Annotation: Chemical mapping of a 177-nucleotide RNA with 2A3 and DMS. Values cover nucleotides 27 to 126. It was measured as part of the RMDB libraries RFM100 and RFMREP. The reactions ran in a buffer of 150 mM KOAc, 10 mM MgCl2 and 150 mM bicine (pH 8.5), at 24 C.

[RMDB]
RNA sequence: GGGAACGACUCGAGUAGAGUCGAAAAGCUCCGGCGGGGGCGAAACAGGAUCGAUGGCCGCGAAGAAGUGUUGAAUUGUUCCCGGCAUGAUACCGCCGUUAUCGGGUCAAAACCUAAAUGCAAACGACUAUCAAACAUGUUUCGACAUGUUUGAUAGAAAAGAAACAACAACAACAAC
Reactivity to 2A3 in 0.01 (KOAc 150mM, MgCl2 10mM, bicine 150mM(pH8.5), 24C), signal-to-noise 6, nucleotides 027 to 126: g000c000u010c000c010g040g000c020g010g020g000g010g000c000g020a050a030a010c100a040g080g040a060u060c020g030a020u080g090g020c010c010g020c050g030a060a040g030a060a010g040u070g050u150u090g100a140a130u060u060g020u070u020c010c020c000g000g000c020a020u040g020a020u080a060c000c010g000c000c010g010u010u050a050u070c030g010g010g000u000c000a010a020a040a020c020c010u070a070a040a010u160g040c040a090a060a020c060g060a040
Reactivity to DMS in 0.01 (KOAc 150mM, MgCl2 10mM, bicine 150mM(pH8.5), 24C), signal-to-noise 5, nucleotides 027 to 126: g010c040u010c020c010g000g000c040g010g020g000g020g020c020g010a050a080a060c120a110g000g000a060u020c050g020a100u000g010g010c050c030g030c170g000a070a050g000a080a110g010u010g000u000u000g010a110a100u010u030g010u000u000c010c010c020g000g000c000a020u000g020a050u010a040c030c010g010c010c040g010u020u020a050u020c030g000g000g000u000c030a070a080a110a130c100c080u010a030a070a080u030g010c110a060a070a120c220g020a190